This 207-nucleotide RNA was probed chemically with DMS and 2A3. Values cover nucleotides 27 to 156. The reactions ran in a buffer of 150 mM KOAc, 10 mM MgCl2 and 150 mM bicine (pH 8.5), at 24 C. For DMS the reverse transcriptase was MarathonRT.

RNA sequence: GGGAACGACUCGAGUAGAGUCGAAAAUCGUGAUGGAGGGACGCAGUAGGCUAAGAGAUGCCAGUUAAUGGAUCCUGGUCUAAGCAGUGAGGUGUGAGAUGUGUCAAAUGCAUUUCUCUCUAACAUUGAGCUGUGAUGGGGAAGCAACUACGGUUGCGAUCGUAUUGGUCUUCGGACCAAUACGAUCAAAAGAAACAACAACAACAAC
Reactivity to DMS in 0.01 (KOAc 150mM, MgCl2 10mM, bicine 150mM(pH8.5), 24C), signal-to-noise 3, nucleotides 027 to 156: u000c040g040u000g030a090u000g000g000a110g010g010g010a060c120g020c050a130g020u010a020g020g030c010u010a040a080g000a080g000a070u000g020c010c030a100g020u000u000a090a160u010g000g000a090u000c050c010u000g000g000u000c070u000a110a240g020c000a030g010u010g020a270g010g010u000g020u000g030a020g000a040u000g020u010g040u000c040a040a090a180u010g010c010a020u000u000u000c010u000c030u010c090u040a060a110c060a080u000u000g000a300g000c010u000g010u000g010a100u000g020g000g020g010a070a110g030c040a040a050c050u000a040c060g020g000u000u010g010c050
Reactivity to 2A3 in 0.01 (KOAc 150mM, MgCl2 10mM, bicine 150mM(pH8.5), 24C), signal-to-noise 5, nucleotides 027 to 156: u120c030g020u070g030a060u080g040g030a030g000g020g010a010c020g000c040a040g040u080a030g010g000c010u060a140a020g070a010g010a040u130g150c010c000a020g040u090u260a120a060u100g020g010a010u030c010c000u010g000g010u010c020u030a030a020g010c010a000g000u020g050a040g030g010u010g000u010g020a020g000a010u020g030u010g040u090c090a070a080a070u230g010c010a010u010u080u020c040u010c000u010c030u050a060a020c020a060u020u070g050a020g020c010u010g010u030g050a080u110g000g000g000g000a030a010g000c000a000a010c010u020a020c150g070g000u010u010g020c010